[RMDB]
RNA sequence: GGGAACGACUCGAGUAGAGUCGAAAAGCCGGUGGGAUGCAGCCAGCUGCGCGGUGCUCGGCUGGCGAACGCGUAGUUGCCGGUAUAGGCCAGUUGGGUCAUGUCGGUGCUGACGAACGCAUCGGCACAUACGACCUACCUUCGGGUAGGUCGUAUGAAAAGAAACAACAACAACAAC
Reactivity to DMS in 0.01 (KOAc 150mM, MgCl2 10mM, bicine 150mM(pH8.5), 24C), signal-to-noise 3, nucleotides 027 to 126: g000c000c010g040g030u000g010g000g000a060u010g030c080a230g000c010c020a020g010c000u000g010c160g000c010g010g010u030g030c010u000c010g000g010c000u010g020g000c000g000a060a090c160g000c030g010u000a050g020u000u010g030c010c010g030g000u000a040u010a050g030g000c000c010a140g000u000u010g010g020g030u000c010a120u000g010u010c010g010g010u000g000c000u020g020a160c190g000a120a130c190g000c000a010u000c010g020g010c040a080
Reactivity to 2A3 in 0.01 (KOAc 150mM, MgCl2 10mM, bicine 150mM(pH8.5), 24C), signal-to-noise 1, nucleotides 027 to 126: g020c020c030g000g000u050g010g110g020a050u100g010c020a010g010c000c010a000g000c000u000g010c030g000c040g220g270u210g030c000u040c010g000g000c000u010g000g000c000g010a040a000c030g000c010g010u030a010g110u040u130g030c000c000g000g000u060a020u110a020g000g000c020c030a030g040u160u180g180g020g000u020c020a020u020g000u000c000g000g050u010g000c010u010g120a250c110g020a140a000c080g000c060a000u000c000g000g000c000a000

This 177-nucleotide RNA was probed chemically with DMS and 2A3. Values cover nucleotides 27 to 126. For DMS, 3,872 sequencing reads were counted. Reactivities are rounded to 0.1 and cut off at 0 and 3. Source: RMDB library OK2TST, as collected in RNAgym. The 2A3 profile rests on 1,998 reads. The RNA was probed in 150 mM KOAc, 10 mM MgCl2 and 150 mM bicine (pH 8.5) at 24 C.